[RMDB]
Conditions: 150 mM KOAc, 10 mM MgCl2 and 150 mM bicine (pH 8.5), 24 C. The record gives the reactivity of an RNA of 177 nucleotides to 2A3 and DMS. DMS adducts were read by reverse transcription with MarathonRT. 2A3 is a SHAPE reagent: it acylates the 2'-hydroxyl of flexible nucleotides of all four kinds. The DMS profile rests on 3,021 reads.
RNA sequence: GGGAACGACUCGAGUAGAGUCGAAAACGGAGCAGAUCCGCGGCCAGGGCGGCCCCGAACCAAGCCUUGAUGCUCAACUCCAUCCGGGCCCAGCUGGGGGCGGUCAUCGUGGGGAACAGGGGGGCGGCUCACCUGUAUUCUUCGGAAUACAGGUGAGAAAAGAAACAACAACAACAAC
Reactivity to 2A3 in 0.01 (KOAc 150mM, MgCl2 10mM, bicine 150mM(pH8.5), 24C), signal-to-noise 4, nucleotides 027 to 126: c050g020g000a020g020c070a020g040a170u020c010c000g030c010g040g050c050c040a060g010g020g030c050g060g000c000c020c010c020g070a050a030c040c020a070a010g030c010c030u030u130g020a080u070g020c040u040c180a110a050c080u030c030c050a050u010c030c030g000g010g000c020c000c010a020g020c060u070g010g020g000g050g010c070g030g010u060c040a070u070c020g050u100g000g000g000g010a090a080c030a110g050g010g000g000g020g000c030g030g000
Reactivity to DMS in 0.01 (KOAc 150mM, MgCl2 10mM, bicine 150mM(pH8.5), 24C), signal-to-noise 2, nucleotides 027 to 126: c120g000g030a100g030c130a120g020a080u030c050c010g010c130g000g000c090c040a080g000g020g000c070g010g020c040c000c010c070g010a150a090c100c060a090a200g020c020c060u000u000g000a030u020g000c050u000c080a010a140c120u010c140c010a060u000c030c040g000g000g020c000c030c020a300g030c080u010g000g030g020g010g050c030g010g020u000c030a090u040c020g020u000g000g000g030g020a120a080c090a050g010g010g030g000g010g000c020g010g000

Reactivities are given for positions 27 through 126.